[RMDB]
RNA sequence: GGGAACGACUCGAGUAGAGUCGAAAAGUAAUAGAUACCGGGAUGACGAGAAAGGGUGCGCUGAUAUCCUGGACGAAUGCUAGCAGUAAAUAGAAUAGCGCUCCUAAUACAACUAGCAACAAAAGGAUAAGGUAUCGUGAUGUCAAUCACAUUGCGAUAUAAUGCAGGUGUUCGCACCUGCAUUAUAAAAAGAAACAACAACAACAAC
Reactivity to 2A3 in 0.01 (KOAc 150mM, MgCl2 10mM, bicine 150mM(pH8.5), 24C), signal-to-noise 3, nucleotides 027 to 156: g020u020a010a080u080a130g050a060u080a070c000c000g000g020g000a030u030g050a090c110g030a080g040a090a070a060g010g000g000u040g030c020g000c000u000g020a030u010a010u150c000c010u020g040g020a030c060g030a070a000u040g010c000u000a010g000c060a020g040u180a020a100a110u120a060g050a110a080u030a060g000c050g000c040u050c000c010u030a060a030u120a050c020a080a000c010u000a010g030c010a020a050c020a050a070a030a030g010g000a010u020a030a110g110g010u100a020u030c030g000u010g000a000u000g050u080c120a080a090u120c000a070c000a010u030u000g000c000g000a000
Reactivity to DMS in 0.01 (KOAc 150mM, MgCl2 10mM, bicine 150mM(pH8.5), 24C), signal-to-noise 2, nucleotides 027 to 156: g050u000a090a050u000a130g010a160u000a110c030c000g080g030g010a120u000g020a200c070g010a130g040a120a080a150g010g010g080u010g000c020g010c050u000g010a140u010a060u000c040c010u020g030g010a160c140g010a140a140u000g000c010u010a030g030c030a140g030u000a070a050a190u010a070g000a090a130u000a080g020c070g000c030u010c010c020u000a060a180u000a050c030a040a030c010u010a010g010c020a060a140c010a030a080a120a070g030g020a070u000a050a140g000g010u000a040u000c000g010u030g000a010u000g010u000c000a120a190u000c190a140c010a010u000u010g010c000g020a050
This 207-nucleotide RNA was probed chemically with 2A3 and DMS.
For 2A3 the reverse transcriptase was SuperScript II with manganese.
The 2A3 profile rests on 1,549 reads.
Values cover nucleotides 27 to 156.
The reactions ran in a buffer of 150 mM KOAc, 10 mM MgCl2 and 150 mM bicine (pH 8.5), at 24 C.
2A3 is a SHAPE reagent: it acylates the 2'-hydroxyl of flexible nucleotides of all four kinds.